[RMDB]
RNA sequence: GGGAACGACUCGAGUAGAGUCGAAAAUGAUUUUCCAAGCCAUGGUGCGGAUGCCACGACAUCUGACCUAUCGGCAGCGAGUGGCCCGCGUGGAUCAGGUGAUCCAGGAGCUUUCGCUCAGCAAAUGCGUGCAGCUACCGUUCGCGGUAGCUGCACGAAAAGAAACAACAACAACAAC
Reactivity to 2A3 in 0.01 (KOAc 150mM, MgCl2 10mM, bicine 150mM(pH8.5), 24C), signal-to-noise 1, nucleotides 027 to 126: u090g010a030u040u050u030u000c000c000a020a060g010c030c010a030u060g040g000u150g020c000g000g000a130u300g000c020c020a050c020g050a040c000a030u060c030u080g120a300c010c030u220a270u240c090g010g040c000a010g030c000g020a050g010u060g040g040c000c040c010g030c040g030u050g010g000a000u000c020a090g300g150u300g120a010u000c000c000a000g260g040a020g020c060u060u100u200c200g000c000u000c070a020g040c000a000a050a090u160g020
Reactivity to DMS in 0.01 (KOAc 150mM, MgCl2 10mM, bicine 150mM(pH8.5), 24C), signal-to-noise 2, nucleotides 027 to 126: u020g020a060u000u010u020u000c020c040a200a080g020c050c050a090u000g000g010u000g010c030g020g010a050u040g030c010c020a060c190g010a180c200a050u000c000u000g000a180c000c000u000a090u040c170g010g010c000a040g020c120g000a180g050u000g000g010c010c020c010g020c020g030u010g020g020a010u000c010a250g040g000u000g010a000u000c010c040a110g010g000a040g020c030u020u010u010c080g000c020u010c070a080g040c150a090a100a050u000g000